[RMDB]
RNA sequence: GGGAACGACUCGAGUAGAGUCGAAAAUUUUAUUUGGAGAUCUGGAAGUGAACGAAGAGUUUAUGAUGUUUCAGAAAGAGGACGUCUUGCCGUAUAUGAAGGGGUUAUGGCGUGAGGCUUUUCAGUCAGUCUGCGGAUUGCCUAACGAGGUAUUCAAUCCUGAACGAAUAUUCGUAUUCGUUCAGGAAAAAGAAACAACAACAACAAC
Reactivity to DMS in 0.01 (KOAc 150mM, MgCl2 10mM, bicine 150mM(pH8.5), 24C), signal-to-noise 1, nucleotides 027 to 156: u000u000u020u020a040u010u010u010g000g020a150g000a070u000c030u020g030g040a070a150g010u020g000a040a100c070g020a080a100g000a170g000u000u040u030a050u020g020a090u000g030u010u010u000c020a120g030a090a050a090g020a140g000g000a040c020g020u000c050u000u010g000c040c040g000u000a070u010a070u010g010a110a090g010g040g020g050u000u010a020u000g030g000c030g020u010g000a110g010g000c020u000u000u000u000c050a080g000u000c050a050g000u000c030u000g020c030g010g020a160u000u000g020c010c040u000a050a040c040g010a100g000g020u000a050u000u000c050a090a240
Reactivity to 2A3 in 0.01 (KOAc 150mM, MgCl2 10mM, bicine 150mM(pH8.5), 24C), signal-to-noise 1, nucleotides 027 to 156: u100u050u000u060a030u040u030u140g020g070a050g030a010u010c040u030g000g010a070a030g040u030g010a050a010c030g010a020a020g070a030g050u060u070u000a110u080g090a020u000g050u040u020u000c050a020g100a020a070a000g040a010g030g000a000c000g000u020c020u010u020g000c020c000g080u090a020u020a040u120g050a020a020g030g050g000g000u050u040a050u100g000g020c020g040u070g030a000g000g030c000u130u060u040u130c030a000g070u030c000a020g040u030c000u030g000c000g020g020a040u000u020g010c000c000u020a010a020c040g020a000g000g010u040a100u060u150c000a010a070
Source information
Chemical mapping of a 207-nucleotide RNA with DMS and 2A3. DMS (dimethyl sulfate) methylates the pairing face of unpaired adenines and cytosines. For DMS the reverse transcriptase was MarathonRT. Reactivities are given for positions 27 through 156. The RNA was probed in 150 mM KOAc, 10 mM MgCl2 and 150 mM bicine (pH 8.5) at 24 C. It was measured as part of the RMDB library OK3TST. For 2A3 the reverse transcriptase was SuperScript II with manganese.